[RMDB]
RNA sequence: GGGAACGACUCGAGUAGAGUCGAAAAGUGCCUCGUCGGCCCGGCAUGCCAACCUGAUCAGAAGUUCAAGGUGGUUUCUCUGGCCUUCCAGAGAGAUGCGCGUCGGAAGAACCGACGAACAAACCUUAAAACAAAACGACGUUCGCGUCGUUUUGAAGUUAUGUUGACCCUUCGGGGUCAACAUAACAAAAGAAACAACAACAACAAC
Reactivity to 2A3 in 0.01 (KOAc 150mM, MgCl2 10mM, bicine 150mM(pH8.5), 24C), signal-to-noise 1, nucleotides 027 to 156: g080u050g080c000c000u000c000g010u020c000g030g050c020c000c000g000g030c010a030u160g000c010c000a030a050c010c000u000g000a000u040c050a180g270a300a070g130u110u010c030a090a010g000g000u010g000g010u060u060u000c000u000c000u000g000g000c030c050u120u150c030c000a010g000a000g010a000g010a020u080g000c010g020c010g080u000c000g020g000a110a000g020a120a050c000c000g000a000c010g020a000a030c020a020a030a040c000c000u110u220a140a120a000a000c010a000a000a010a000c000g000a000c000g010u050u100c200g030c000g060u010c000g000u000u000u050u000g000a000a000
Source: RMDB library M2RFPK, as collected in RNAgym. The record gives the reactivity of an RNA of 207 nucleotides to 2A3. For 2A3, 601 sequencing reads were counted. For 2A3 the reverse transcriptase was SuperScript II with manganese.